The record gives the reactivity of an RNA of 177 nucleotides to 2A3 and DMS. 2A3 adducts were read by reverse transcription with SuperScript II with manganese. For DMS, 5,393 sequencing reads were counted.
RNA sequence: GGGAACGACUCGAGUAGAGUCGAAAAGACAUGAGUCUCAACACAUCUGAAUGUGUUGUACAUACUGUUCUGACUACGAUAUGUACAGUGUGUACAGCUGCGAAGCGAGACUCAUCGUAGUCAGAUAGCUAGACCUAGAUUUCGAUCUAGGUCUAGCAAAAGAAACAACAACAACAAC
Reactivity to 2A3 in 0.01 (KOAc 150mM, MgCl2 10mM, bicine 150mM(pH8.5), 24C), signal-to-noise 3, nucleotides 027 to 126: g100a010c000a020u050g000a010g000u000c020u000c020a000a000c000a000c000a020u030c140u300g170a190a050u020g000u000g000u000u000g000u000a000c000a000u000a010c000u010g040u040u030c000u000g010a020c020u060a020c040g030a080u030a060u180g030u030a030c010a010g000u010g000u000g000u030a020c000a000g000c000u010g010c020g010a010a000g040c000g000a010g000a000c000u000c000a010u020c000g000u000a000g010u000c010a000g040a020u030a010
Reactivity to DMS in 0.01 (KOAc 150mM, MgCl2 10mM, bicine 150mM(pH8.5), 24C), signal-to-noise 3, nucleotides 027 to 126: g000a060c070a060u010g010a000g010u000c000u010c020a150a000c010a010c010a030u000c250u020g030a100a060u000g040u000g000u000u000g010u000a000c000a010u000a020c030u000g000u000u010c000u010g020a060c120u020a070c180g030a100u040a070u040g000u040a030c000a020g000u010g000u010g010u000a020c020a100g000c010u000g020c280g000a230a000g020c000g000a000g000a000c000u000c010a000u010c050g040u000a010g000u000c030a030g020a060u010a070
The RNA was probed in 150 mM KOAc, 10 mM MgCl2 and 150 mM bicine (pH 8.5) at 24 C.